Chemical mapping of a 177-nucleotide RNA with DMS. Conditions: 150 mM KOAc, 10 mM MgCl2 and 150 mM bicine (pH 8.5), 24 C. Reactivities are given for positions 27 through 126. Values are in units of 0.01, from 0 to 300, in steps of 10. DMS adducts were read by reverse transcription with MarathonRT. For DMS, 644 sequencing reads were counted. Source: RMDB library OK2TST, as collected in RNAgym.
[RMDB]
RNA sequence: GGGAACGACUCGAGUAGAGUCGAAAACUGUAAACUCCCCUGUGCAGGACAGGUCACCAAGGAGUCCGGUCUGGUCAGCUUUAGCCUUCGGCCAGUUUUACCGCAAAAUACGCUCUCAAAUUCCUGCAUAAUUGAAGAGCUUCGGCUCUUCAAUUAUAAAAGAAACAACAACAACAAC
Reactivity to DMS in 0.01 (KOAc 150mM, MgCl2 10mM, bicine 150mM(pH8.5), 24C), signal-to-noise 1, nucleotides 027 to 126: c110u000g010u050a040a110a250c030u000c010c010c000c010u000g010u000g010c010a000g000g000a000c010a010g000g010u000c130a190c190c230a090a100g000g010a050g000u000c230c010g030g000u000c020u000g010g020u000c010a140g010c030u010u030u000a080g020c170c300u010u030c180g010g010c000c020a040g010u000u000u030u000a130c010c020g000c300a050a070a120a090u000a080c200g000c120u010c010u000c020a040a070a110u000u000c000c000u010g000c020